RNA sequence: GGGAACGACUCGAGUAGAGUCGAAAAGCUGGCGCCUAUGGGCAGUUGGGUCAUGGCUUUAGCUCGAAUGAGAUGCUACCGCGAAUGGUAAUGGAGCUAAUGGGCAGCACCAUCACUCAGGUGGCCACUGAUUAGUGGCCUUCGGGCCACUAAUCAGAAAAGAAACAACAACAACAAC
Reactivity to 2A3 in 0.01 (KOAc 150mM, MgCl2 10mM, bicine 150mM(pH8.5), 24C), signal-to-noise 2, nucleotides 027 to 126: g060c040u000g020g000c030g020c040c060u150a210u150g000g060g000c070a100g090u090u030g040g010g010u070c080a130u090g000g020c000u000u040u010a010g000c000u000c020g070a200a110u180g050a050g020a140u170g000c020u030a020c000c000g080c100g210a120a070u210g020g020u040a060a040u040g060g000a010g020c000u000a060a060u100g050g070g010c010a020g020c020a040c020c000a010u020c000a010c020u010c020a010g050g000u020g130g020c000c020a030
Reactivity to DMS in 0.01 (KOAc 150mM, MgCl2 10mM, bicine 150mM(pH8.5), 24C), signal-to-noise 3, nucleotides 027 to 126: g020c160u000g010g010c050g010c010c010u000a090u000g000g010g000c060a080g000u000u000g000g020g020u010c110a140u000g010g000c030u000u000u000a070g000c010u000c000g010a140a120u010g010a140g000a140u000g010c070u010a030c010c020g030c170g030a080a070u000g000g010u000a030a070u000g010g010a020g010c000u000a020a020u010g020g010g020c070a050g030c160a140c000c000a020u010c060a250c020u000c040a040g020g010u000g010g000c020c030a090